[RMDB]
RNA sequence: GGGAACGACUCGAGUAGAGUCGAAAAAUUAACCCAGCCUAAAUGAAGAGCAGGACAAAAGGUUCGUCUGCAAACUCUCCAUGGUAGACAGAGGAUGGGGAAAUGGAUGUGGACUAUUUGGAAGUAACUCUACAUUCCUCUUCGGAGGAAUGUAGAGAAAAGAAACAACAACAACAAC
Reactivity to DMS in 0.01 (KOAc 150mM, MgCl2 10mM, bicine 150mM(pH8.5), 24C), signal-to-noise 2, nucleotides 027 to 126: a120u000u020a100a110c020c000c010a150g010c050c020u020a040a080a060u010g000a130a020g000a040g020c050a120g040g010a070c070a060a040a130a180g020g010u030u000c080g020u010c010u000g020c070a070a090a140c090u010c020u000c010c030a000u000g000g020u010a060g000a060c150a040g000a100g000g000a060u020g000g000g000g000a040a120a070u000g020g000a140u000g000u000g000g010a060c060u000a070u000u000u000g010g010a030a070g000u010a070a140
Reactivity to 2A3 in 0.01 (KOAc 150mM, MgCl2 10mM, bicine 150mM(pH8.5), 24C), signal-to-noise 1, nucleotides 027 to 126: a000u070u030a030a020c020c000c020a010g000c000c040u150a180a180a140u180g070a030a060g000a020g000c030a040g020g050a020c040a020a130a000a010g080g010u060u050c060g040u000c000u000g080c000a010a000a200c000u000c020u000c060c000a020u040g110g090u090a060g030a110c050a040g120a060g060g070a020u020g000g000g000g000a000a020a070u070g050g010a000u000g050u050g040g030a010c000u040a140u070u060u040g060g020a050a070g060u020a050a030

Description:
An RNA of 177 nucleotides, treated with DMS and 2A3 and read out base by base. High 2A3 reactivity points to a flexible backbone, as in loops and unpaired stretches. DMS adducts were read by reverse transcription with MarathonRT. For DMS, 1,518 sequencing reads were counted. It was measured as part of the RMDB library M2PK90.